[RMDB]
RNA sequence: GGGAACGACUCGAGUAGAGUCGAAAACGUGAGCAGGAAGCCGACCAGCAGCAGCAGCGGAUCGUUGUAGAUGACGUCCAACGACAGAGCCGUGAAGUAGCAGAUCAGGGACGACACCACGCCGAAACCGACCAUCGAGCCCAGCUUCUGCCGGGUGCGGUAGUAAUCUAUUCGUAGAUUACUACCGAAAAGAAACAACAACAACAAC
Reactivity to 2A3 in 0.01 (KOAc 150mM, MgCl2 10mM, bicine 150mM(pH8.5), 24C), signal-to-noise 4, nucleotides 027 to 156: c050g030u070g050a020g020c020a010g040g040a060a030g020c020c010g060a070c040c020a010g030c020a000g020c020a000g000c000a000g020c060g030g000a040u050c000g020u020u030g040u050a050g010a130u100g040a030c050g040u000c010c010a060a060c030g030a030c020a080g090a010g030c030c020g070u070g020a100a030g040u110a010g020c040a010g010a130u060c030a020g010g000g040a010c020g010a010c020a010c020c020a030c040g000c020c000g040a070a040a020c020c020g050a040c010c010a050u070c030g020a010g000c000c000c000a020g020c030u150u060c050u130g040c020c020g030g000g030u090g010
Reactivity to DMS in 0.01 (KOAc 150mM, MgCl2 10mM, bicine 150mM(pH8.5), 24C), signal-to-noise 2, nucleotides 027 to 156: c070g000u000g040a140g000c050a070g000g010a050a150g010c020c000g020a090c040c020a080g010c040a090g000c030a120g040c070a160g030c060g030g020a090u010c030g030u000u000g000u000a120g000a120u010g030a060c060g000u000c070c000a110a080c030g010a100c070a080g000a120g010c000c020g010u000g010a090a110g010u020a070g020c030a100g000a070u010c070a140g000g010g020a140c070g020a100c020a110c000c010a090c000g030c030c020g000a050a090a160c060c000g020a070c040c030a090u010c020g030a100g000c000c030c020a080g030c030u010u000c140u000g030c010c000g010g000g000u000g020
Notes:
Chemical mapping of a 207-nucleotide RNA with 2A3 and DMS. For DMS, 3,687 sequencing reads were counted. For DMS the reverse transcriptase was MarathonRT. The 2A3 profile rests on 3,309 reads.